Structure probing data (2A3) for a 177-nucleotide construct. The data come from the RNA Mapping Database (RMDB), library RFM100. For 2A3 the reverse transcriptase was SuperScript II with manganese.
RNA sequence: GGGAACGACUCGAGUAGAGUCGAAAAUUUUAUACUUUAAUUUCCUCUAUACCUCACUUUUAUUGGAGAAAAAAGAGAAUAGAAAAUAGUGGAUUUCUCUUCUUUUUUUCAAUCAAAGGGAGUUGUAUCUUUAUUCGUAUUUCGAUACGAAUAAAGAAAAAGAAACAACAACAACAAC
Reactivity to 2A3 in 0.01 (KOAc 150mM, MgCl2 10mM, bicine 150mM(pH8.5), 24C), signal-to-noise 1, nucleotides 027 to 126: u000u080u170u120a230u090a160c050u130u100u090a160a100u060u160u030c010c000u050c030u040a090u030a070c010c010u000c000a030c000u030u030u030u060a000u000u000g000g000a010g000a000a000a000a000a000a000g030a000g010a020a030u080a090g110a060a130a090a100u200a140g190u180g130g090a090u010u050u030c010u000c000u000u010c010u000u000u020u000u000u000u020c000a050a000u000c010a000a000a000g000g030g000a000g020u050u060g010u030a050